[RMDB]
RNA sequence: GGGAACGACUCGAGUAGAGUCGAAAAGUGGGCUCAGAGAAUCCGGAUGAAGCCGGGCGUUACAGCAUGGAUGUGGAGUACGGUCAGUACAGUGUCAUCCUGCAGGUUGACGGUUUUCCACCAUCGCCCAAAUACGAAUUUUCGAAUUCGUAUUUGGAAAAGAAACAACAACAACAAC
Reactivity to DMS in 0.01 (KOAc 150mM, MgCl2 10mM, bicine 150mM(pH8.5), 24C), signal-to-noise 9, nucleotides 027 to 126: g020u000g000g010g010c070u000c100a100g010a140g000a100a110u010c040c040g010g010a130u010g010a120a110g010c020c020g000g000g010c060g010u000u000a040c070a130g010c020a040u010g020g000a030u000g010u000g010g000a200g010u000a010c010g010g010u010c220a110g010u000a020c020a100g010u010g010u000c030a020u000c020c000u000g010c020a050g010g010u010u010g010a030c030g010g000u000u000u000u000c030c030a110c100c080a070u000c110g020c120
Reactivity to 2A3 in 0.01 (KOAc 150mM, MgCl2 10mM, bicine 150mM(pH8.5), 24C), signal-to-noise 7, nucleotides 027 to 126: g020u030g030g000g000c020u030c100a030g040a010g030a180a080u020c040c010g010g030a090u110g130a050a030g080c000c000g020g020g020c040g030u070u090a030c030a020g030c020a040u240g020g010a000u030g020u050g050g060a100g020u020a010c030g030g230u200c100a050g010u020a020c010a020g070u050g110u200c000a010u020c000c000u010g000c010a030g000g100u060u060g020a010c010g000g030u050u030u080u000c010c020a030c020c010a070u070c040g090c010